[RMDB]
RNA sequence: GGGAACGACUCGAGUAGAGUCGAAAAUAUUCCGGUGCGGGAUACUUGGUAAUAUGUAACGCUAAUUGCAUAAGAUUGUAGGACGGAAUUUACAGUCUUGGUUUUUAUAAACCUGAAACUAAGUAAGAAUAGUAAGAGCGGUUCGCCGCUCUUACAAGUUACAAAAACAGUUCGCUGUUUUUGUAACAAAAGAAACAACAACAACAAC
Reactivity to 2A3 in 0.01 (KOAc 150mM, MgCl2 10mM, bicine 150mM(pH8.5), 24C), signal-to-noise 2, nucleotides 027 to 156: u080a010u010u010c010c010g060g100u210g080c140g000g120g040a050u030a040c000u010u000g000g000u010a010a040u000a030u040g010u040a070a010c060g060c220u090a100a050u160u050g010c010a010u010a020a020g010a010u030u000g010u030a010g010g070a020c010g010g020a010a010u030u010u000a030c000a020g000u000c000u010u000g020g010u020u020u030u050u080a230u120a070a010a010c000c000u010g030a020a020a000c020u010a020a000g030u020a000a080g060a140a130u120a120g000u000a000a000g000a000g000c000g000g020u010u020c070g020c050c000g010c000u000c000u000u000a000c000a000a000
Reactivity to DMS in 0.01 (KOAc 150mM, MgCl2 10mM, bicine 150mM(pH8.5), 24C), signal-to-noise 1, nucleotides 027 to 156: u000a120u000u000c000c010g050g000u010g050c060g030g000g000a220u000a000c000u000u010g000g010u000a030a110u010a020u010g000u000a070a030c120g040c170u000a080a190u000u020g000c010a030u000a040a060g000a030u000u000g020u010a020g040g040a180c040g000g010a060a300u000u010u010a010c010a010g010u000c000u000u000g020g020u000u000u000u010u060a120u020a090a020a040c010c000u000g000a030a050a020c000u000a010a050g000u020a020a120g000a110a110u010a140g020u000a020a000g010a040g030c000g000g020u000u000c300g030c010c020g000c000u010c010u000u000a010c000a020a150